Conditions: 150 mM KOAc, 10 mM MgCl2 and 150 mM bicine (pH 8.5), 24 C.
Chemical mapping of a 207-nucleotide RNA with DMS and 2A3.
For DMS, 1,922 sequencing reads were counted.
Reactivities are given for positions 27 through 156.
DMS adducts were read by reverse transcription with MarathonRT.
[RMDB]
RNA sequence: GGGAACGACUCGAGUAGAGUCGAAAAAUCACCGGUGGGGAACCCCAUACCGCAACGGCGUAGAAGUAAAUGCUAACCAAUCCGUGGUAUCUACGCGACGGAGCAUCCACGGAUAACUCUAACAAGGCUAAGCGUCUCGGUUUCGACCGAGACGCAAGCUCAAUACAUGAUUCGUCAUGUAUUGAGCAAAAGAAACAACAACAACAAC
Reactivity to DMS in 0.01 (KOAc 150mM, MgCl2 10mM, bicine 150mM(pH8.5), 24C), signal-to-noise 1, nucleotides 027 to 156: a040u020c050a070c050c000g000g000u000g050g050g040g000a040a180c050c000c010c020a160u010a080c100c010g000c020a030a100c020g000g020c070g040u000a070g040a070a080g030u010a050a050a190u010g010c000u000a100a170c090c070a100a110u000c010c000g000u000g020g030u000a040u010c040u000a040c030g010c000g030a060c120g030g010a090g000c080a110u000c040c050a030c020g000g010a060u000a030a050c060u010c070u000a140a080c100a050a120g000g020c010u010a090a110g010c000g080u010c000u000c000g040g030u000u010u010c290g010a080c020c000g000a020g000a010c000g070c000a010a060
Reactivity to 2A3 in 0.01 (KOAc 150mM, MgCl2 10mM, bicine 150mM(pH8.5), 24C), signal-to-noise 3, nucleotides 027 to 156: a000u070c030a030c070c000g020g000u060g010g050g000g030a060a080c050c000c000c000a050u100a050c020c030g040c070a090a080c060g010g000c010g000u010a010g010a050a000g010u050a010a030a040u090g040c080u110a070a060c050c080a090a040u020c010c010g000u000g000g000u020a020u000c010u010a030c010g010c010g090a050c090g080g030a020g000c000a020u010c000c000a000c000g000g000a000u020a010a020c030u030c030u180a100a090c090a140a020g110g040c030u160a120a080g000c000g010u010c000u000c000g010g030u080u120u090c150g060a000c000c000g000a000g030a000c000g020c000a010a000